[RMDB]
RNA sequence: GGGAACGACUCGAGUAGAGUCGAAAACAGGACGUUACGCGUUUCCGCCAUCGCUUCGCCGGUCAGGUGAUUAAUAACAUCCGCUUGUGGUUUAUCCGGCGCGAAGCAGACAGCCUGCGCGCCGCUGCAGCCAGUUUUAGUUCGCUAAAACUGGCUGAAAAGAAACAACAACAACAAC
Reactivity to 2A3 in 0.01 (KOAc 150mM, MgCl2 10mM, bicine 150mM(pH8.5), 24C), signal-to-noise 3, nucleotides 027 to 126: c040a020g020g090a020c040g040u140u160a060c040g100c030g040u000u030u060c000c020g110c030c000a030u030c030g000c070u090u080c080g020c020c000g050g000u070c020a030g060g000u030g050a010u060u140a090a150u080a080a080c090a090u030c030c030g070c040u000u010g050u140g030g090u010u040u130a070u090c000c000g010g010c000g000c000g040a020a030g030c030a020g050a120c060a000g070c000c010u020g020c040g000c020g010c000c010g040c030u080g040
Reactivity to DMS in 0.01 (KOAc 150mM, MgCl2 10mM, bicine 150mM(pH8.5), 24C), signal-to-noise 2, nucleotides 027 to 126: c110a110g000g000a030c100g000u000u020a030c120g020c080g000u000u040u000c050c050g000c040c110a030u000c150g000c040u000u000c060g000c030c010g000g000u020c060a000g000g000u000g010a140u000u000a090a110u030a090a030c060a050u020c070c000g000c000u000u000g000u030g020g000u000u010u000a210u010c080c000g000g010c040g030c040g010a120a150g080c070a200g000a130c200a080g000c080c020u000g000c000g020c040g060c010c000g000c120u000g030

Structure probing data (2A3 and DMS) for a 177-nucleotide construct. Source: RMDB library OK1LIB, as collected in RNAgym. The DMS profile rests on 2,105 reads. DMS adducts were read by reverse transcription with MarathonRT.